[RMDB]
RNA sequence: GGGAACGACUCGAGUAGAGUCGAAAACGAUGGGCGGAAAGACAUGGGCAGCUUCGCCGAUCAGGAUGGUGCGCUUUGCUGCAAAGACAUGGGGCACGAGGCCGGAAAGCGGCCAGGCUUGCGGGCAGCGUGCAUGAGGAUUCGUCCUCAUGCACGCAAAAGAAACAACAACAACAAC
Reactivity to DMS in 0.01 (KOAc 150mM, MgCl2 10mM, bicine 150mM(pH8.5), 24C), signal-to-noise 2, nucleotides 027 to 126: c080g000a110u010g000g000g010c030g020g000a070a040a100g020a110c090a080u010g020g000g000c030a100g000c060u000u000c050g030c010c010g000a100u000c050a070g000g010a080u000g020g010u010g010c100g000c040u010u010u020g010c020u010g010c090a080a060a080g010a110c090a060u000g000g000g000g000c060a070c070g010a090g000g020c010c020g000g000a060a100a170g010c030g040g000c000c010a060g010g010c070u000u000g020c100g010g000g020c070a100
Reactivity to 2A3 in 0.01 (KOAc 150mM, MgCl2 10mM, bicine 150mM(pH8.5), 24C), signal-to-noise 2, nucleotides 027 to 126: c060g040a040u090g000g030g010c040g020g080a120a060a000g080a030c030a170u060g030g040g000c030a020g000c000u080u070c060g000c030c000g010a050u030c020a040g110g070a050u130g040g060u110g010c070g010c100u030u050u130g000c000u030g000c010a150a050a000g050a010c010a050u040g000g030g060g000c020a000c090g030a080g030g030c000c000g000g070a180a020a020g190c010g000g000c020c000a000g000g000c010u050u070g020c040g000g000g010c020a010

The data come from the RNA Mapping Database (RMDB), library OK2TST. Structure probing data (DMS and 2A3) for a 177-nucleotide construct. DMS adducts were read by reverse transcription with MarathonRT. The reactions ran in a buffer of 150 mM KOAc, 10 mM MgCl2 and 150 mM bicine (pH 8.5), at 24 C. Values cover nucleotides 27 to 126. The 2A3 profile rests on 2,447 reads.